Chemical mapping of a 177-nucleotide RNA with 2A3 and DMS. Source: RMDB library OK1LIB, as collected in RNAgym. 2A3 adducts were read by reverse transcription with SuperScript II with manganese. Reactivities are given for positions 27 through 126. The RNA was probed in 150 mM KOAc, 10 mM MgCl2 and 150 mM bicine (pH 8.5) at 24 C.
[RMDB]
RNA sequence: GGGAACGACUCGAGUAGAGUCGAAAACGGUAUCACUGUGUGCUAUGGGAGAUUUCUUGUGGUGGAGUACAGGAAGAGCGUGUUUCAUCUAAGUUUUUCACGCCAAUAUUUUUAUCACAGUCAAUAAGCACCUGUACAGCUUCGGUUGUGCAGGUGCAAAAGAAACAACAACAACAAC
Reactivity to 2A3 in 0.01 (KOAc 150mM, MgCl2 10mM, bicine 150mM(pH8.5), 24C), signal-to-noise 9, nucleotides 027 to 126: c050g030g050u140a050u190c030a050c060u020g010u000g020u030g070c050u080a070u120g020g060g010a070g000a050u030u090u050c030u040u080g050u060g000g000u010g000g010a020g010u030a030c030a030g060g050a050a050g030a030g010c020g000u020g000u000u020u000c030a060u000c020u080a080a080g020u000u020u000u050u070c020a030c070g030c000c000a050a030u060a140u080u160u040u050u060a060u090c010a000c010a040g040u050c020a040a080u110a210a030
Reactivity to DMS in 0.01 (KOAc 150mM, MgCl2 10mM, bicine 150mM(pH8.5), 24C), signal-to-noise 6, nucleotides 027 to 126: c070g010g020u020a040u030c090a060c030u010g010u000g000u000g000c110u010a040u010g000g000g000a080g010a080u020u030u010c040u010u000g010u010g000g010u000g000g000a060g000u010a030c060a080g000g010a070a080g000a120g000c040g020u010g000u000u000u010c030a040u010c130u020a070a100g010u000u000u010u020u010c010a040c060g000c020c050a050a080u030a020u010u010u010u010u020a050u020c050a050c080a050g020u010c100a050a100u030a050a130